[RMDB]
RNA sequence: GGGAACGACUCGAGUAGAGUCGAAAAGGGACGUUCAGCAUGUUGUCCCUGCUCUUGCGGGGCUCAGGAUCUUUGUAAGAGGAACAGGAGUAAACCCUGAAAAUUUCGGUAAAAAUUAAGAAGCAGCGGAGUGGCAUGGUUAGCGUCACUGCAUGCAGACUUUUACGUGAUUCGUCACGUAAAAGUCAAAAGAAACAACAACAACAAC
Reactivity to 2A3 in 0.01 (KOAc 150mM, MgCl2 10mM, bicine 150mM(pH8.5), 24C), signal-to-noise 1, nucleotides 027 to 156: g000g000g040a010c030g000u160u110c060a030g010c030a000u000g020u070u060g030u130c000c040c000u000g090c000u010c000u020u110g030c040g010g000g050g000c020u010c060a050g020g020a140u000c030u020u160u130g050u150a080a060g000a000g070g030a080a000c070a060g000g070a030g010u180a130a140a110c000c000c000u010g010a030a030a040a070u090u080u090c060g000g010u160a190a190a060a000a000u050u040a110a020g110a130a080g000c000a000g050c060g120g010a050g090u100g080g000c000a000u010g000g300u080u050a010g000c000g000u000c000a010c100u010g000c050a040u050g080c080a030